[RMDB]
RNA sequence: GGGAACGACUCGAGUAGAGUCGAAAAAUGUUGUUCAUUACAGAAUAGCUAAUGAUUGUAGAGACUCUAUACGUCUUUUUGCAGCAGAAACUGUUAAAGCUAAGGAAGAAUGUGUUAAAUCUUCUUAUGCCAGUGCCACAUUACGUGAGGUUAUAGGCUGUAUUUCUGAUUUCGAUCAGAAAUACAGAAAAGAAACAACAACAACAAC
Reactivity to DMS in 0.01 (KOAc 150mM, MgCl2 10mM, bicine 150mM(pH8.5), 24C), signal-to-noise 3, nucleotides 027 to 156: a100u000g020u010u000g030u010u000c020a100u000u000a140c050a160g010a040a070u000a070g020c040u000a050a140u000g000a150u000u010g020u010a130g010a250g000a070c010u000c030u000a120u010a060c100g000u000c000u000u000u000u000u000g000c000a080g020c020a050g010a100a050a070c050u020g010u020u000a030a090a080g010c000u000a180a220g020g010a030a030g010a060a070u010g030u020g040u010u000a090a120a120u000c020u000u000c010u000u000a150u000g010c000c030a200g020u000g010c010c050a110c020a070u000u000a060c100g030u000g010a060g050g000u000u000a100u000a120g030g010
Reactivity to 2A3 in 0.01 (KOAc 150mM, MgCl2 10mM, bicine 150mM(pH8.5), 24C), signal-to-noise 4, nucleotides 027 to 156: a000u190g010u140u040g010u000u020c020a010u030u090a040c010a030g080a130a070u070a080g030c070u120a070a090u140g080a070u050u210g040u120a050g020a020g010a110c000u040c040u090a040u020a120c050g000u000c000u020u030u020u030u020g000c000a010g010c010a010g050a050a080a020c020u080g040u150u150a160a060a010g000c020u040a030a040g060g020a010a010g030a060a060u110g070u040g060u220u180a100a150a080u020c000u040u000c020u070u040a030u100g020c000c000a020g020u030g060c010c000a040c020a040u040u140a020c030g020u020g050a090g010g020u080u050a080u060a120g090g050